[RMDB]
Source: RMDB library OK2TRN, as collected in RNAgym. An RNA of 177 nucleotides, treated with DMS and 2A3 and read out base by base.

RNA sequence: GGGAACGACUCGAGUAGAGUCGAAAACAUCCGACAACAAGCAAUUCACAACGGAAGCAAAUUCUCAACUCAAACAAAUGGCAACUUUAGUACACUCAGCUGUAGCACGCCCUAUUGGCAGAGAUGGCUGAACUAGUUAGUUCGCUAACUAGUUCAGAAAAGAAACAACAACAACAAC
Reactivity to DMS in 0.01 (KOAc 150mM, MgCl2 10mM, bicine 150mM(pH8.5), 24C), signal-to-noise 7, nucleotides 027 to 126: c130a090u010c010c020g020a090c100a050a070c070a080a090g000c100a080a060u000u000c060a060c070a070a080c120g010g000a070a080g010c070a030a060a100u000u000c020u010c040a090a090c110u000c090a060a060a080c130a020a060a100u000g000g010c040a040a060c070u000u000u000a060g010u010a050c080a040c050u000c070a050g000c040u000g020u000a060g020c070a050c110g010c030c050c070u010a080u000u000g020g010c030a060g000a070g000a070u000g010g000
Reactivity to 2A3 in 0.01 (KOAc 150mM, MgCl2 10mM, bicine 150mM(pH8.5), 24C), signal-to-noise 8, nucleotides 027 to 126: c030a050u000c020c010g100a050c050a090a010c020a060a010g070c020a030a180u130u070c050a030c010a160a060c060g030g020a020a020g040c040a020a060a130u110u000c030u010c020a060a120c050u040c110a090a130a140c010a040a150a070u100g030g000c010a050a050c030u090u080u090a050g030u060a030c040a020c050u060c040a040g010c040u030g030u080a010g040c060a020c070g020c010c000c010u130a120u090u140g050g000c020a000g010a010g010a110u040g100g000

For 2A3, 12,012 sequencing reads were counted.